[RMDB]
RNA sequence: GGGAACGACUCGAGUAGAGUCGAAAAUGACCCUGGUGUCCAGAGGGAAAUGUGACCACAUUGACCACAGGUCAUGCUUCCAUCAUAGCAGGCUCGUUGCUGUGGUGACAAUGGGACCUGUGACAGGCCUACUAUUUAUGUUCGCAUAAAUAGUAGGAAAAGAAACAACAACAACAAC
Reactivity to DMS in 0.01 (KOAc 150mM, MgCl2 10mM, bicine 150mM(pH8.5), 24C), signal-to-noise 9, nucleotides 027 to 126: u010g000a220c030c000c010u000g010g010u010g010u010c030c050a080g000a110g010g000g000a060a070a050u000g010u000g000a160c060c050a110c140a100u010u010g000a140c080c020a030c040a020g010g000u000c000a030u010g000c070u000u000c120c010a020u000c010a020u000a040g010c010a030g010g010c150u010c150g010u010u000g000c010u000g030u000g000g010u000g000a060c300a040a030u000g000g000g000a030c000c000u000g010u000g000a090c100a070g000g000
Reactivity to 2A3 in 0.01 (KOAc 150mM, MgCl2 10mM, bicine 150mM(pH8.5), 24C), signal-to-noise 9, nucleotides 027 to 126: u120g060a050c010c000c010u030g050g040u080g050u070c050c050a060g030a130g090g050g030a030a070a060u160g040u100g060a060c020c010a040c040a120u050u160g070a090c040c000a010c010a020g000g000u000c010a020u060g040c020u050u000c020c000a020u020c000a010u030a010g000c010a010g110g040c070u090c160g160u090u030g000c000u010g000u020g020g020u010g010a030c060a040a070u060g020g030g020a030c000c000u000g000u010g040a020c020a010g040g030